Notes: Chemical mapping of a 207-nucleotide RNA with 2A3. Source: RMDB library M2RFPK, as collected in RNAgym.

[RMDB]
RNA sequence: GGGAACGACUCGAGUAGAGUCGAAAACCUAUCCAAAAUGUGAUCCCAUCUUGCACACUGUGCUAAUUUGAGAUUCUCAUGCCUCCUACUUGGAGAGAUCUGGACUAGAAGUCAGGGCAUCUGACUCAAUACAUUCGUCAGUUCGCUGACGAAUGAAGAACCAAAAUUGCUUCGGCAAUUUUGGUUCAAAAGAAACAACAACAACAAC
Reactivity to 2A3 in 0.01 (KOAc 150mM, MgCl2 10mM, bicine 150mM(pH8.5), 24C), signal-to-noise 2, nucleotides 027 to 156: c000c000u040a070u070c050c000a150a050a000a060u050g010u000g020a000u000c010c010c000a010u000c020u000u040g010c010a000c030a070c160u280g000u010g000c030u070a100a070u010u030u040g050a050g030a030u150u060c030u000c090a030u050g050c000c000u020c000c000u060a210c110u160u140g020g000a000g010a040g000a070u020c060u130g040g000a000c010u040a020g020a160a000g030u000c010a000g080g040g100c080a120u080c030u010g000a000c000u040c000a040a110u090a250c000a010u000u000c000g000u020c020a000g000u050u060c140g000c120u000g000a000c000g000a000a000u000g000a000a030